[RMDB]
RNA sequence: GGGAACGACUCGAGUAGAGUCGAAAACGCGCGGCGAUAGCGCGCCGCAUACGCGCGUAUCGCAUACGCCGCAUAGCGAUAGCGUAUGCGUAUGCGAUACGCAUACGCCGCUAUUAUAUACGCGCGCGCGGAUGAUUAGGUUCGCCUAAUCAUCCGCAAAAGAAACAACAACAACAAC
Reactivity to 2A3 in 0.01 (KOAc 150mM, MgCl2 10mM, bicine 150mM(pH8.5), 24C), signal-to-noise 2, nucleotides 027 to 126: c030g010c000g030c000g050g040c060g050a020u010a010g040c000g010c100g040c070c040g080c040a100u140a170c170g100c020g020c000g010u000a000u000c000g010c030a020u010a050c020g020c010c020g050c060a090u110a040g090c120g210a110u130a080g020c020g010u170a130u260g030c000g010u000a000u000g060c010g040a020u010a000c000g000c000a010u020a000c010g000c010c000g000c000u000a000u070u030a070u000a010u040a050c020g000c000g010c000g000c040
Reactivity to DMS in 0.01 (KOAc 150mM, MgCl2 10mM, bicine 150mM(pH8.5), 24C), signal-to-noise 1, nucleotides 027 to 126: c020g000c010g030c000g020g000c160g030a060u000a000g000c020g000c170g020c060c080g030c070a060u010a070c160g040c090g030c020g020u020a000u000c030g010c010a070u000a090c010g010c040c100g020c140a060u000a040g010c190g010a150u000a080g000c000g000u000a020u010g000c000g040u000a000u000g000c020g000a060u000a010c000g010c000a010u000a020c070g000c010c010g020c000u000a000u020u010a130u010a150u000a090c020g020c000g000c000g000c120

Overview:
Chemical mapping of a 177-nucleotide RNA with 2A3 and DMS. For DMS, 1,386 sequencing reads were counted. Values cover nucleotides 27 to 126. The reactions ran in a buffer of 150 mM KOAc, 10 mM MgCl2 and 150 mM bicine (pH 8.5), at 24 C.